[RMDB]
An RNA of 177 nucleotides, treated with 2A3 and DMS and read out base by base. For DMS, 26,416 sequencing reads were counted. Reactivities are given for positions 27 through 126.
RNA sequence: GGGAACGACUCGAGUAGAGUCGAAAACAUCAAACAGGCCUGGAUUAUACUAAGUUGGGCAGAAAUAAGUUGACAGGCUUAGGGAAGUGUUUGACUGGUAUAGGUGAUAGCCAGGUGCUUACAUUCACGAUAUUAAUGCAUUCGUGCAUUAAUAUCGAAAAGAAACAACAACAACAAC
Reactivity to 2A3 in 0.01 (KOAc 150mM, MgCl2 10mM, bicine 150mM(pH8.5), 24C), signal-to-noise 9, nucleotides 027 to 126: c030a060u170c080a070a080a110c080a050g000g030c000c000u020g020g010a060u130u030a030u050a040c020u170a260a090g040u040u030g030g050g000c030a010g100a010a090a020u070a030a000g040u050u080g190a130c090a090g010g000c000u010u020a040g050g020g050a090a080g080u020g010u040u020u020g010a020c000u000g000g030u030a030u030a100g150g070u170g210a100u070a050g050c000c010a020g000g020u070g110c020u100u090a070c020a140u070u160c070a020
Reactivity to DMS in 0.01 (KOAc 150mM, MgCl2 10mM, bicine 150mM(pH8.5), 24C), signal-to-noise 8, nucleotides 027 to 126: c050a090u020c150a060a110a130c130a050g000g000c010c000u000g000g000a120u030u010a030u010a010c010u000a030a040g010u000u000g000g000g000c020a030g010a080a120a110u010a010a010g010u000u020g010a150c300a080g000g000c000u000u000a040g000g010g020a180a090g000u010g010u000u000u000g000a030c010u000g010g020u000a010u000a020g010g020u030g000a110u050a090g000c000c010a030g010g020u000g000c050u010u020a060c200a090u020u010c110a210